[RMDB]
RNA sequence: GGGAACGACUCGAGUAGAGUCGAAAAUUCACAGAGGUAGCUUUUGACCUAGACCUCCUAGUGGGGAUAGGAGAUCCUUGAGGUGAGAAGAAAAGGAGAUAGAGGUCUGACAUUAGGAGACUGCAUAGCAUUAGUACUGGUUCGCCAGUACUAAUGCAAAAGAAACAACAACAACAAC
Reactivity to 2A3 in 0.01 (KOAc 150mM, MgCl2 10mM, bicine 150mM(pH8.5), 24C), signal-to-noise 3, nucleotides 027 to 126: u060u020c030a000c030a040g060a000g020g020u040a030g060c010u070u060u120u220g060a030c000c000u020a060g090a110c000c010u040c000c000u050a070g010u100g120g030g010g010a000u040a000g050g000a020g000a020u060c020c050u040u070g060a030g090g060u090g060a050g050a110a000g040a000a090a030a020g070g010a040g020a020u090a070g100a020g010g040u020c050u040g040a070c030a100u040u090a050g040g000a020g000a040c020u050g020c070a080u120a080
Reactivity to DMS in 0.01 (KOAc 150mM, MgCl2 10mM, bicine 150mM(pH8.5), 24C), signal-to-noise 4, nucleotides 027 to 126: u010u000c040a080c060a110g000a050g010g000u010a080g010c040u000u000u010u000g000a080c050c020u000a080g000a100c050c000u000c010c020u000a060g020u000g020g010g000g020a240u000a020g010g010a070g000a060u000c010c170u000u000g010a070g010g010u010g000a090g000a170a060g000a070a060a090a070g000g010a040g010a080u010a080g010a070g000g010u000c030u010g000a080c080a080u000u010a070g020g010a090g000a090c070u000g000c110a070u010a120